[RMDB]
Structure probing data (2A3) for a 207-nucleotide construct. For 2A3 the reverse transcriptase was SuperScript II with manganese. Values cover nucleotides 27 to 156. For 2A3, 1,154 sequencing reads were counted. The RNA was probed in 150 mM KOAc, 10 mM MgCl2 and 150 mM bicine (pH 8.5) at 24 C.
RNA sequence: GGGAACGACUCGAGUAGAGUCGAAAAGCAACUUAGGAUUUUAGGCUCCCCGUGCGUGUCUCGAACCAUGCCGGGCCAAACCCACGGGGGCUAGCGGUCCCCGUGCGGUCAAAAUCAAACCGCUGGAAAAACAGUUCUAGCUUCGGCUAGAACUGAACCAUCACUUUCUGUUCGCAGAAAGUGAUGGAAAAGAAACAACAACAACAAC
Reactivity to 2A3 in 0.01 (KOAc 150mM, MgCl2 10mM, bicine 150mM(pH8.5), 24C), signal-to-noise 2, nucleotides 027 to 156: g030c010a010a100c080u130u120a110g070g100a240u100u080u050u140a070g040g010c020u070c020c000c010c010g080u130g040c030g010u090g030u020c070u070c210g060a060a040c010c000a000u010g000c000c000g030g020g000c000c010a040a040a000c000c000c010a000c000g000g000g000g020g000c000u010a030g000c000g020g010u010c000c000c000c000g010u000g030c080g000g020u010c040a060a050a040a100u110c010a090a170a040c010c000g000c030u060g030g050a070a140a030a020a020c000a000g000u010u010c000u000a020g010c000u060u040c220g040g000c000u000a000g000a000a000c000u000g000a000a010
It was measured as part of the RMDB library M2RFPK.